An RNA of 177 nucleotides, treated with DMS and 2A3 and read out base by base.
It was measured as part of the RMDB library RFM100.
RNA sequence: GGGAACGACUCGAGUAGAGUCGAAAACGCACCUUUGCGGGGUCCGGUGCGCUCCUGACGACCCUUGAAAAUCCGCGGGAAGGAAUAGUUUUCACGCCAGGUCGUACUCAUAACCGCAGCAGGUCUCCGUAAAUCUACCCUUCGGGGUAGAUUUACGAAAAGAAACAACAACAACAAC
Reactivity to DMS in 0.01 (KOAc 150mM, MgCl2 10mM, bicine 150mM(pH8.5), 24C), signal-to-noise 1, nucleotides 027 to 126: c070g040c140a090c010c000u000u030u000g000c040g010g020g000g000u000c290c180g000g000u000g000c050g000c030u000c000c020u000g020a000c020g010a190c070c030c020u000u100g000a100a010a060a050u000c080c020g000c020g070g000g000a070a150g000g000a070a140u090a110g020u000u000u040u000c020a080c090g000c070c030a030g000g030u000c000g000u010a050c060u070c080a120u050a040a150c030c000g020c020a060g030c150a060g000g000u000c000u000c030
Reactivity to 2A3 in 0.01 (KOAc 150mM, MgCl2 10mM, bicine 150mM(pH8.5), 24C), signal-to-noise 4, nucleotides 027 to 126: c020g010c010a030c010c010u020u040u050g000c000g000g010g020g040u060c050c040g010g000u010g000c000g000c060u030c010c010u020g010a010c020g030a040c020c030c000u020u040g020a020a010a000a020u060c030c010g010c090g110g080g050a080a070g070g040a100a040u120a110g060u010u030u040u050c040a030c020g050c010c020a010g000g000u010c000g010u010a040c050u060c060a090u100a130a030c010c010g000c000a000g040c060a010g000g060u000c030u000c020
Reactivities are rounded to 0.1 and cut off at 0 and 3. The RNA was probed in 150 mM KOAc, 10 mM MgCl2 and 150 mM bicine (pH 8.5) at 24 C. DMS adducts were read by reverse transcription with MarathonRT.